This 177-nucleotide RNA was probed chemically with DMS. For DMS, 2,265 sequencing reads were counted. Conditions: 150 mM KOAc, 10 mM MgCl2 and 150 mM bicine (pH 8.5), 24 C.
[RMDB]
RNA sequence: GGGAACGACUCGAGUAGAGUCGAAAAAAUUCAUAUCCUUCUAUAUAGGAUUGUAUAUAGCAAGGACACGGGACUAGCUUCCACUUACACUGUGCUCCUUUGUUUAACUAGUAAAUUCUAAGAGCCCUAAAGGAUGUUCAUUCGUGAACAUCCUUUAAAAAGAAACAACAACAACAAC
Reactivity to DMS in 0.01 (KOAc 150mM, MgCl2 10mM, bicine 150mM(pH8.5), 24C), signal-to-noise 3, nucleotides 027 to 126: a100a070u010u010c030a050u010a080u000c000c000u000u010c070u000a070u020a160u000a040g000g000a090u000u000g000u010a050u000a070u000a050g010c100a010a020g000g010a030c020a010c040g010g010g010a080c180u000a050g010c060u010u010c230c170a150c060u000u000a100c300a100c040u010g010u000g000c140u000c010c030u000u000u000g030u000u000u000a030a070c100u000a040g000u010a050a040a090u010u000c030u000a070a150g000a240g000c020c010c040